[RMDB]
RNA sequence: GGGAACGACUCGAGUAGAGUCGAAAAAAGAUAUGGAGCAUACUACCCACCCUAACGCACCACUUGGAUUUAUGCUCGGAAACGAGCAUUGUCAGUGGUGUCGUUAGGAGGUAUGCUCCUAAGUCAACAUGUAUCGCGUGUUCGCACGCGAUACAUGAAAAGAAACAACAACAACAAC
Reactivity to DMS in 0.01 (KOAc 150mM, MgCl2 10mM, bicine 150mM(pH8.5), 24C), signal-to-noise 2, nucleotides 027 to 126: a110a070g000a100u010a190u010g000g000a030g010c000a000u000a000c000u040a170c000c020c050a300c130c020c000u000a000a030c020g010c000a010c030c000a030c000u000u020g000g000a000u000u000u000a010u000g020c010u000c000g000g000a060a070a240c010g010a020g000c000a010u000u000g010u000c010a050g030u010g020g010u000g000u010c010g000u000u000a020g000g030a010g000g010u000a010u000g000c000u000c000c000u030a000a100g000u030c100a130a190
Reactivity to 2A3 in 0.01 (KOAc 150mM, MgCl2 10mM, bicine 150mM(pH8.5), 24C), signal-to-noise 2, nucleotides 027 to 126: a000a000g300a040u270a100u200g010g000a000g010c000a020u000a030c020u120a300c020c020c010a010c020c000c010u000a010a000c020g010c020a010c020c000a000c030u130u270g250g000a070u290u300u080a010u030g000c010u000c020g030g040a040a040a010c010g000a060g060c030a000u010u030g000u000c000a000g000u000g010g000u000g000u010c000g010u010u000a040g000g000a000g000g030u010a000u010g030c000u000c010c010u010a030a010g080u020c050a020a050